Structure probing data (2A3 and DMS) for a 207-nucleotide construct. It was measured as part of the RMDB library OK3TST. The 2A3 profile rests on 2,496 reads. The reactions ran in a buffer of 150 mM KOAc, 10 mM MgCl2 and 150 mM bicine (pH 8.5), at 24 C. Reactivities are given for positions 27 through 156.

RNA sequence: GGGAACGACUCGAGUAGAGUCGAAAACUCGCGAGCCCAUCGAGGCGUGGGGAGCGACAUGAAUCAGCCUCGAUUAGAUGUGGUCGACAGUACUGCGGCGUACAGCGACCUAGUUAGAAGCCGCAAAACCGGAAGAGAUGACGCUCGACGGACGUCACGUAUGGAGCCUAUUCGUAGGCUCCAUACGAAAAGAAACAACAACAACAAC
Reactivity to 2A3 in 0.01 (KOAc 150mM, MgCl2 10mM, bicine 150mM(pH8.5), 24C), signal-to-noise 4, nucleotides 027 to 156: c020u020c010g020c030g020a120g090c000c000c000a010u010c030g000a020g000g000c040g050u050g020g010g020g000a060g000c020g110a090c070a140u300g100a120a080u130c020a060g000c000c010u000c020g010a050u110u100a140g070a090u140g060u060g040g020u050c020g010a090c030a050g000u010a020c040u050g010c000g030g010c010g020u030a010c020a020g000c010g010a030c000c000u010a020g020u000u040a100g030a170a010g030c020c010g000c000a060a000a000a050c090c020g050g030a090a000g040a020g030a110u070g050a020c020g020c060u040c090g050a060c050g030g000a000c000g020u010c020a000
Reactivity to DMS in 0.01 (KOAc 150mM, MgCl2 10mM, bicine 150mM(pH8.5), 24C), signal-to-noise 2, nucleotides 027 to 156: c020u010c000g010c010g020a090g020c010c000c020a130u000c010g030a020g010g020c040g020u000g000g020g020g050a160g020c000g010a300c170a110u010g010a100a130u010c050a080g010c030c000u000c010g000a100u010u010a120g010a110u000g020u000g000g010u000c010g000a130c050a080g000u000a040c040u000g000c000g080g000c040g020u030a180c070a200g000c040g000a030c020c050u000a050g050u000u000a100g010a110a180g000c000c000g010c010a040a060a100a060c060c040g010g020a040a080g010a170g000a150u000g000a040c020g010c010u000c010g010a140c020g010g000a020c030g010u000c010a140